The data come from the RNA Mapping Database (RMDB), library M2PK50. Structure probing data (DMS and 2A3) for a 177-nucleotide construct.
RNA sequence: GGGAACGACUCGAGUAGAGUCGAAAAAUGGUGACCUUCGGGUCACCAUGGUGCGUAGCUGCGUUAAUUUUAUAGCUACGCUUAAUAAAUUUAAUUAACGCAAUGGAGCCUGCUUCGGCAGGCUCAACAGUACUUGUAGCUUCGGCUACAAGUACUGAAAAGAAACAACAACAACAAC
Reactivity to DMS in 0.01 (KOAc 150mM, MgCl2 10mM, bicine 150mM(pH8.5), 24C), signal-to-noise 1, nucleotides 027 to 126: a010u000g010g030u000g010a000c020c000u000u000c280g050g000g000u000c000a000c000c000a000u000g030g020u010g010c010g000u000a000g030c010u000g000c000g020u010u010a010a020u000u010u020u000a110u020a060g010c000u000a000c010g030c010u000u010a030a040u000a050a060a120u000u000u000a060a030u000u020a020a010c000g010c020a280a150u010g020g000a010g030c000c010u000g050c000u000u010c200g040g020c020a000g000g010c000u000c000a000a010
Reactivity to 2A3 in 0.01 (KOAc 150mM, MgCl2 10mM, bicine 150mM(pH8.5), 24C), signal-to-noise 1, nucleotides 027 to 126: a000u040g030g000u000g030a000c010c010u030u040c240g150g000g010u000c000a010c000c000a000u000g010g040u040g010c000g010u000a010g030c040u050g000c030g000u010u010a010a060u000u070u070u160a300u080a110g000c010u010a000c010g000c000u000u040a060a020u060a000a030a050u170u300u120a020a040u020u020a020a000c000g000c000a000a070u070g090g040a000g010c020c010u030g000c000u010u040c140g110g020c030a000g010g000c000u010c000a010a000
The reactions ran in a buffer of 150 mM KOAc, 10 mM MgCl2 and 150 mM bicine (pH 8.5), at 24 C.